RNA sequence: GGGAACGACUCGAGUAGAGUCGAAAAUUGCUGGCCAUAAACUCCACAAAUACCUAUCAGACUACAGGCAUUUAAUCUACAGUUGAAGGUAAACAAAACUGGGGUCUAGUUUAGGCGAAAAGAACGUUAAGCAUAGGGCAUUCGUGCCCUAUGCUUAAAAAGAAACAACAACAACAAC
Reactivity to DMS in 0.01 (KOAc 150mM, MgCl2 10mM, bicine 150mM(pH8.5), 24C), signal-to-noise 1, nucleotides 027 to 126: u020u020g000c000u040g000g000c000c010a090u010a050a040a040c010u000c000c010a010c020a110a050a200u000a100c040c000u000a060u000c020a000g000a000c000u050a190c300a100g000g000c210a120u060u000u000a070a120u000c000u000a060c190a110g010u000u000g000a180a080g000g000u000a000a040a210c300a000a010a100a050c260u000g000g000g010g000u020c060u010a040g000u000u000u000a010g000g000c090g050a000a060a100a090g000a160a150c170g060u000
Reactivity to 2A3 in 0.01 (KOAc 150mM, MgCl2 10mM, bicine 150mM(pH8.5), 24C), signal-to-noise 1, nucleotides 027 to 126: u090u040g020c050u210g050g000c000c010a040u150a100a050a000c060u060c000c000a030c010a050a130a000u000a000c000c000u090a230u200c000a030g040a260c000u000a080c050a040g000g000c060a080u000u000u200a100a190u210c040u150a200c050a000g000u010u000g050a040a040g020g000u070a000a000a130c030a000a200a000a000c000u000g000g000g000g000u000c000u000a010g020u010u100u090a020g000g010c040g070a100a100a000a060g090a060a000c030g030u030
This 177-nucleotide RNA was probed chemically with DMS and 2A3. 2A3 adducts were read by reverse transcription with SuperScript II with manganese. For 2A3, 519 sequencing reads were counted. Values cover nucleotides 27 to 126.